[RMDB]
An RNA of 207 nucleotides, treated with 2A3 and read out base by base. Values cover nucleotides 27 to 156. For 2A3 the reverse transcriptase was SuperScript II with manganese.
RNA sequence: GGGAACGACUCGAGUAGAGUCGAAAAGAUGGGUCCGAUGGAUUAAUGCGUCGCCCGCCAUUGGAUCCUGAUUGAUAGAUUGAAGGCGACGGUCGGAUCACUCGGUAAUUCGGUGCUCCACGAGUGAUCCGUGAUGAUAGUUAAGAUGAGCACCUAAAGUAAUAUCGGACUUCGGUCCGAUAUUACUAAAAGAAACAACAACAACAAC
Reactivity to 2A3 in 0.01 (KOAc 150mM, MgCl2 10mM, bicine 150mM(pH8.5), 24C), signal-to-noise 1, nucleotides 027 to 156: g040a020u060g000g080g000u000c000c000g000a000u000g000g000a010u020u300a170a050u300g210c000g000u000c000g030c000c000c000g060c000c010a000u000u000g030g000a000u000c000c000u000g020a070u040u210g040a040u040a250g160a140u060u140g060a190a000g010g000c000g000a000c000g000g020u040c000g000g000a000u000c000a040c000u000c000g060g000u150a200a050u270u230c020g000g000u000g000c000u000c000c030a020c000g000a000g000u000g000a000u000c000c000g000u000g000a060u070g000a030u090a190g170u200u110a050a000g030a090u130g000a000g010c000a000c000c000u000a020a020